About this RNA:
Chemical mapping of a 207-nucleotide RNA with 2A3 and DMS. The DMS profile rests on 2,888 reads. The reactions ran in a buffer of 150 mM KOAc, 10 mM MgCl2 and 150 mM bicine (pH 8.5), at 24 C.
[RMDB]
RNA sequence: GGGAACGACUCGAGUAGAGUCGAAAAGGGUUUGAGCCAUCGCCCGAAUAAGAUGGCUGAUACAAGUCGACAUUGUACGCGACGUAGUACGUACUCAUUAGUGCGAAAGCACGGUUAGUCCGACUAGGCAGGGACGAUCUUCUGUCAAUACUUAGAACACCCUCAGUAUGUUCGCAUACUGAGGGUGAAAAGAAACAACAACAACAAC
Reactivity to 2A3 in 0.01 (KOAc 150mM, MgCl2 10mM, bicine 150mM(pH8.5), 24C), signal-to-noise 4, nucleotides 027 to 156: g030g010g000u020u070u120g050a000g000c000c000a000u000c000g050c010c010c060g030a060a140u230a120a000g000a000u010g000g000c000u010g000a010u050a120c080a090a060g010u010c020g030a090c060a120u060u270g070u160a050c070g000c020g020a010c050g000u000a000g020u020a110c020g000u000a000c000u000c030a000u000u070a090g010u000g000c030g050a070a050a000g000c010a000c000g000g000u010u000a000g010u100c070c000g000a010c010u030a040g010g000c010a010g040g010g020a070c120g090a090u010c040u130u020c000u070g010u010c010a020a080u140a180c050u110u130a030g020a080a020
Reactivity to DMS in 0.01 (KOAc 150mM, MgCl2 10mM, bicine 150mM(pH8.5), 24C), signal-to-noise 2, nucleotides 027 to 156: g020g060g020u040u040u000g020a050g040c000c020a030u000c020g010c030c000c050g010a120a140u000a040a090g020a020u000g000g020c020u010g040a170u000a060c110a070a060g000u000c000g020a020c030a080u000u000g030u010a040c090g000c000g000a180c040g050u000a110g020u000a020c030g000u000a060c020u010c140a080u000u000a090g010u000g000c030g000a220a060a220g020c010a010c030g000g020u000u000a140g000u000c000c020g020a180c010u000a100g030g000c030a020g030g010g030a090c050g030a090u010c080u000u000c020u000g020u010c010a070a070u000a050c050u000u010a170g010a160a300